[RMDB]
RNA sequence: GGGAACGACUCGAGUAGAGUCGAAAAAGCUGGGUGAUCAGGUCGGCCGGGGUGUGGCGGGCGGCGUAGUCGGUGGCCAGGCGGGCCGUCAUCCGGUUCCAGUCGCCCCUGGCGCGGAUCAGGCCGAAUUUUAGUAAAAUUUCGAUUUUACUAAAAUAAAAGAAACAACAACAACAAC
Reactivity to DMS in 0.01 (KOAc 150mM, MgCl2 10mM, bicine 150mM(pH8.5), 24C), signal-to-noise 3, nucleotides 027 to 126: a100g020c070u010g010g020g020u010g000a100u010c080a050g000g010u000c030g020g020c000c020g030g010g020g020u010g040u000g010g030c050g000g020g010c040g010g010c140g010u000a100g020u010c060g010g020u000g020g000c020c040a150g010g010c130g020g010g010c020c020g000u000c070a090u010c090c020g020g010u000u000c030c010a090g020u000c030g010c030c010c000c030u010g010g000c060g010c020g000g000a050u000c040a090g000g020c030c020g010a070
Reactivity to 2A3 in 0.01 (KOAc 150mM, MgCl2 10mM, bicine 150mM(pH8.5), 24C), signal-to-noise 1, nucleotides 027 to 126: a000g090c090u080g020g050g020u080g010a070u080c060a060g080g150u040c010g110g020c020c060g000g020g000g000u180g000u060g050g060c090g020g000g000c030g020g020c030g070u090a070g020u050c060g020g030u030g070g010c020c010a050g160g080c110g040g010g000c000c000g030u030c000a040u020c030c000g040g000u070u030c000c000a030g040u040c010g030c000c040c000c010u020g040g040c250g050c000g300g010a040u110c020a000g100g030c010c010g010a040